[RMDB]
RNA sequence: GGGAACGACUCGAGUAGAGUCGAAAAGGAGGUGAAGCAGAUGAACCAAAGAGCCAAAUGGUGUGAAGUGUCUGACAUAAGGACAGCUGAUAUGUGACAGAAUCGGUUUACUGCAAUAAUUGUUAUUACCAUUAGUCUCUAACAACUUGUUGAGGCAGUCAAAAUAUUAGUUCGCUAAUAUUUUGACAAAAGAAACAACAACAACAAC
Reactivity to 2A3 in 0.01 (KOAc 150mM, MgCl2 10mM, bicine 150mM(pH8.5), 24C), signal-to-noise 8, nucleotides 027 to 156: g060g000a020g010g020u060g040a060a010g020c030a020g040a170u060g030a050a020c020c010a100a080a030g080a010g020c030c020a050a070a110u160g020g010u050g020u040g080a080a030g040u020g030u030c020u040g030a070c020a120u170a030a030g040g010a020c020a030g030c020u030g020a020u030a050u200g060u030g030a030c010a040g070a050a070u080c040g000g000u030u050u050a060c030u040g020c030a030a060u120a090a060u060u070g040u060u080a080u120u110a060c010c010a010u040u090a030g010u010c010u010c020u090a040a030c040a040a110c060u100u140g020u030u020g010a030g030g030c020a020
Reactivity to DMS in 0.01 (KOAc 150mM, MgCl2 10mM, bicine 150mM(pH8.5), 24C), signal-to-noise 4, nucleotides 027 to 156: g020g000a060g030g010u000g000a100a150g010c030a070g010a100u000g000a110a110c070c030a060a090a140g010a170g010c040c030a060a070a110u000g020g020u000g020u020g040a100a090g010u010g020u000c040u000g010a090c130a140u010a110a180g010g000a050c050a060g010c020u010g020a080u000a040u010g030u000g000a110c030a100g020a070a200u000c060g020g020u000u000u000a080c040u000g000c010a050a080u000a030a110u000u000g010u000u000a080u000u000a080c050c030a120u000u000a090g010u000c010u000c030u000a040a040c040a070a060c120u000u000g030u010u000g010a030g010g020c030a140
Background:
This 207-nucleotide RNA was probed chemically with 2A3 and DMS. Conditions: 150 mM KOAc, 10 mM MgCl2 and 150 mM bicine (pH 8.5), 24 C. The DMS profile rests on 9,747 reads. 2A3 is a SHAPE reagent: it acylates the 2'-hydroxyl of flexible nucleotides of all four kinds.